[RMDB]
RNA sequence: GGGAACGACUCGAGUAGAGUCGAAAAUUCAACCCCAAAAAUCUAGUGCAAAUAUUGUCUUAAUUACUUAGGCUAAAAGAAAUAAGUAUUAAAGCGGGACAACGCAUCGACAUUUGAUACAAAUAUUUUUAGCAUAUUAGAUUCGUCUAAUAUGCAAGUAUAGAUUCAUGUUCGCAUGAAUCUAUACAAAAGAAACAACAACAACAAC
Reactivity to 2A3 in 0.01 (KOAc 150mM, MgCl2 10mM, bicine 150mM(pH8.5), 24C), signal-to-noise 3, nucleotides 027 to 156: u120u050c040a060a040c040c010c000c010a120a080a030a030a010u070c070u100a030g030u000g040c020a100a050a080u100a070u070u060g010u010c010u030u200a170a120u110u030a060c030u010u040a030g070g030c020u190a200a100a000a060g060a030a120a030u050a050a000g000u020a000u060u090a150a030a020g100c070g030g010g020a010c020a090a020c060g020c010a050u080c060g100a060c010a050u050u100u060g070a060u090a110c070a010a170a030u090a200u080u170u050u110u140a020g000c000a000u000a000u000u000a000g000a000u000u040c070g010u010c040u000a010a000u000a000u010g010c000a020a000
Reactivity to DMS in 0.01 (KOAc 150mM, MgCl2 10mM, bicine 150mM(pH8.5), 24C), signal-to-noise 1, nucleotides 027 to 156: u000u000c170a050a190c060c000c000c040a010a010a130a190a080u020c070u010a060g020u000g000c030a130a170a150u000a020u000u000g000u000c000u000u020a090a130u000u000a100c000u000u000a070g000g000c150u010a140a090a090a190g000a060a100a090u000a050a030g000u000a050u000u000a060a120a090g000c160g010g080g000a080c030a000a030c050g020c070a120u000c010g010a260c080a070u010u000u000g020a150u000a090c070a070a110a160u010a130u000u000u000u010u000a170g000c000a030u000a000u010u000a000g000a040u000u000c300g000u000c000u000a000a010u000a000u000g030c000a010a080